[RMDB]
RNA sequence: GGGAACGACUCGAGUAGAGUCGAAAAAGCAAGUCAGGCUUGUCGCUGUGAGAGACUAAACACAUCUUUUAGAUGGAAACAAAGAUUACGCUUUAGCUGCUUAGUUCAGCUACACCUUGGAUAACUUAUUCUAUACGGGUUUUUCAAAGGUGUUGACCGUGACGUAAACGUUCGCGUUUACGUCACGAAAAGAAACAACAACAACAAC
Reactivity to 2A3 in 0.01 (KOAc 150mM, MgCl2 10mM, bicine 150mM(pH8.5), 24C), signal-to-noise 1, nucleotides 027 to 156: a000g040c040a010a000g010u080c100a010g010g000c000u090u110g030u010c010g000c010u070g100u150g070a090g020a040g010a100c040u050a000a010a030c100a000c030a080u000c040u020u200u040u140a080g040a090u090g000g080a060a040a040c090a040a110a000g040a040u210u130a120c130g010c070u190u000u000a020g000c000u000g010c130u240u060a000g020u250u090c030a000g010c000u000a010c000a000c000c000u000u030g000g010a000u000a040a010c010u010u010a130u300u000c060u050a070u000a220c110g000g000g000u000u110u000u000u000c130a210a080a010g000g020u000g010u060u040g020a050c040
Structure probing data (2A3) for a 207-nucleotide construct. The 2A3 profile rests on 420 reads.